[RMDB]
RNA sequence: GGGAACGACUCGAGUAGAGUCGAAAACGUCCAAUUCGUUGGACGAAAAAAGCGUACUACUUGACCGAGGAGCUACCCACCGGUAUUCCCAAAUAGGAAUACCGAGGCUCUACCCACCGGUACCAAGUAUCGCAAAAAAGUGACCUUCGGGUCACAAAGAGUCCAAUAAUUUCGAUUAUUGGACUCUAAAAGAAACAACAACAACAAC
Reactivity to DMS in 0.01 (KOAc 150mM, MgCl2 10mM, bicine 150mM(pH8.5), 24C), signal-to-noise 2, nucleotides 027 to 156: c010g000u000c010c010a040a020u000u010c240g010u010u010g010g000a010c010g020a000a030a070a120a050a060g030c040g040u000a110c150u000a020c020u000u000g000a140c000c010g000a070g000g020a010g040c000u000a010c010c000c020a300c180c020g000g020u010a000u010u010c010c010c030a070a180a240u010a050g020g020a020a010u000a020c000c000g010a000g000g000c000u000c010u030a010c010c030c010a220c050c000g010g000u010a100c160c030a020a010g000u000a010u000c020g010c010a000a020a130a080a070a140g010u000g010a040c000c010u010u010c300g070g030g010u010c010a010c010a010a120
Reactivity to 2A3 in 0.01 (KOAc 150mM, MgCl2 10mM, bicine 150mM(pH8.5), 24C), signal-to-noise 4, nucleotides 027 to 156: c010g010u000c000c000a000a020u080u090c190g070u110u020g000g010a000c010g130a120a020a000a010a000a010g030c040g030u100a110c050u010a000c000u050u010g020a060c000c000g010a030g010g010a010g020c020u030a050c060c030c050a030c050c000g000g000u000a000u010u040c020c020c050a170a300a240u270a130g000g000a000a000u000a000c000c000g000a000g000g000c000u000c010u030a070c030c030c040a070c040c010g020g010u040a150c090c010a000a000g000u010a020u190c030g000c030a020a020a030a060a030a090g010u010g000a000c000c010u030u080c300g160g000g010u000c000a000c000a010a030
Structure probing data (DMS and 2A3) for a 207-nucleotide construct. Values cover nucleotides 27 to 156. DMS adducts were read by reverse transcription with MarathonRT. It was measured as part of the RMDB library RNAMAK. The DMS profile rests on 2,978 reads.